[RMDB]
RNA sequence: GGGAACGACUCGAGUAGAGUCGAAAAGAUAUGGAUUCAGGGAGAAGACAUUCGGAAACGAAUGUACUUCUUUGAUCUGACUGUCCUAAGUCGCGGGGAAACACCUAGUUCGCUAGGUGUUUCCCAACGGCAGAUGUAACUUCGGUUACAUCUGCCGAAAAGAAACAACAACAACAAC
Reactivity to DMS in 0.01 (KOAc 150mM, MgCl2 10mM, bicine 150mM(pH8.5), 24C), signal-to-noise 1, nucleotides 027 to 126: g000a120u000a200u010g010g010a010u000u000c010a030g000g010g000a000g000a040a000g010a050c030a000u000u010c000g000g000a120a070a190c000g040a030a000u000g020u030a070c010u000u000c000u000u000u000g000a080u010c030u000g010a060c300u000g000u020c000c000u020a010a140g010u000c010g030c300g000g010g000g000a020a000a000c000a020c000c000u000a000g030u000u010c300g000c010u000a000g000g020u000g000u000u000u000c000c000c030a000a010

Notes: The record gives the reactivity of an RNA of 177 nucleotides to DMS. For DMS the reverse transcriptase was MarathonRT.